[RMDB]
The record gives the reactivity of an RNA of 177 nucleotides to 2A3 and DMS. Reactivities are rounded to 0.1 and cut off at 0 and 3. Values cover nucleotides 27 to 126. The 2A3 profile rests on 78,594 reads. For DMS, 56,343 sequencing reads were counted.

RNA sequence: GGGAACGACUCGAGUAGAGUCGAAAAGCGAACUUGGAUAGCAGAUUGAGGUGUCACGGUCUCUGUUAUUUAGAUUCGCAUCGCAGGUAGUAUUAGAUUGUGAUACCUCAAGUACUAUCAGCGAUUAGUAACAGUUAGUAUUCGUACUAGCUGUUACAAAAGAAACAACAACAACAAC
Reactivity to 2A3 in 0.01 (KOAc 150mM, MgCl2 10mM, bicine 150mM(pH8.5), 24C), signal-to-noise 9, nucleotides 027 to 126: g060c030g030a020a070c040u090u120g090g010a000u010a000g020c050a040g030a270u020u020g010a010g000g010u010g010u010c010a000c010g020g010u000c030u000c010u030g020u020u010a060u040u130u050a060g030a090u080u080c080g000c080a020u020c010g000c030a010g030g010u080a030g010u020a140u150u080a040g010a010u010u020g010u010g010a010u010a020c000c000u000c000a010a000g000u020a010c000u000a000u020c030a010g060c050g130a150u080u240a050
Reactivity to DMS in 0.01 (KOAc 150mM, MgCl2 10mM, bicine 150mM(pH8.5), 24C), signal-to-noise 9, nucleotides 027 to 126: g010c050g010a080a100c140u020u020g010g010a000u000a000g010c100a070g020a220u010u010g010a020g010g010u000g000u000c010a020c010g000g000u000c010u000c150u000g000u010u000a020u000u000u020a170g000a050u000u000c260g000c200a060u000c020g010c200a080g010g010u000a020g000u020a030u020u010a020g000a020u000u010g010u000g000a020u000a010c010c020u000c000a000a010g010u020a090c000u000a010u000c000a130g010c060g010a080u020u010a100